[RMDB]
RNA sequence: GGGAACGACUCGAGUAGAGUCGAAAAAGUUUCCAAUUCGUUGGAAACUACUGUCGGAAUGCGGUAUAUAAAAUCCUCCGCUUAAGGAUUUUACCGACUUAAAGUACACUAGUUUCGACUAGUGUAACACCUUGUGGGAGUUCGCUCCCACAAGGUGAAAAGAAACAACAACAACAAC
Reactivity to DMS in 0.01 (KOAc 150mM, MgCl2 10mM, bicine 150mM(pH8.5), 24C), signal-to-noise 1, nucleotides 027 to 126: a260g000u000u000u000c000c010a010a040u000u010c170g020u010u000g000g000a030a000a010c000u020a040c020u020g070u000c030g000g000a180a110u000g000c120g000g010u010a060u010a240u000a060a000a010a010u000c030c020u010c250c130g000c080u000u010a110a000g000g000a020u000u000u000u000a120c010c010g000a010c040u010u000a050a060a070g000u000a000c010a000c010u000a030g000u000u000u000c250g010a090c000u000a010g000u000g000u000a000a030
Reactivity to 2A3 in 0.01 (KOAc 150mM, MgCl2 10mM, bicine 150mM(pH8.5), 24C), signal-to-noise 1, nucleotides 027 to 126: a000g010u010u010u020c000c000a000a010u070u080c100g040u010u020g000g040a000a000a000c020u050a050c030u060g000u020c010g000g080a130a120u120g100c040g000g090u010a130u000a010u040a230a190a000a020u000c000c000u000c010c040g020c190u040u150a080a030g020g030a020u000u000u050u130a040c010c020g010a020c020u050u250a140a000a040g100u040a010c000a000c000u020a010g020u020u080u040c100g090a020c010u020a000g000u000g000u000a000a000